The record gives the reactivity of an RNA of 177 nucleotides to 2A3 and DMS. The data come from the RNA Mapping Database (RMDB), library OK2TST. The 2A3 profile rests on 864 reads. For DMS the reverse transcriptase was MarathonRT.
[RMDB]
RNA sequence: GGGAACGACUCGAGUAGAGUCGAAAAUCAUCUGCACUAAGAAUGGCUCCAACUUAUCCAGUGGUAGUGCUGAUGGACCAUCACAUUUCGCGCUAUUCGGCUCUGGAUGUGCUUCGAUAAAUAGCCACUGACUCCUCAGGUUCGCCUGAGGAGUCAGAAAAGAAACAACAACAACAAC
Reactivity to 2A3 in 0.01 (KOAc 150mM, MgCl2 10mM, bicine 150mM(pH8.5), 24C), signal-to-noise 1, nucleotides 027 to 126: u040c000a000u020c000u040g020c000a020c030u060a030a000g080a240a150u040g010g030c010u030c020c020a130a140c060u180u100a050u170c050c010a030g090u040g020g070u030a020g010u020g000c030u020g040a010u030g000g030a060c020c010a040u120c050a040c000a020u060u150u120c050g000c000g000c000u150a230u240u150c050g000g060c020u020c010u110g040g030a070u060g060u100g000c080u110u080c020g000a010u060a110a120a010u070a010g010c000c040a000
Reactivity to DMS in 0.01 (KOAc 150mM, MgCl2 10mM, bicine 150mM(pH8.5), 24C), signal-to-noise 1, nucleotides 027 to 126: u000c010a000u010c000u000g000c050a000c000u010a080a090g010a200a070u000g000g000c000u000c020c100a070a080c090u020u010a060u020c050c080a090g060u000g020g000u000a000g020u000g020c040u000g010a080u010g010g030a180c080c030a170u000c080a100c120a120u000u000u000c230g000c170g020c010u000a090u020u000c090g000g020c020u010c040u000g000g020a080u000g010u000g000c160u000u000c060g030a100u000a060a070a100u010a080g000c080c080a170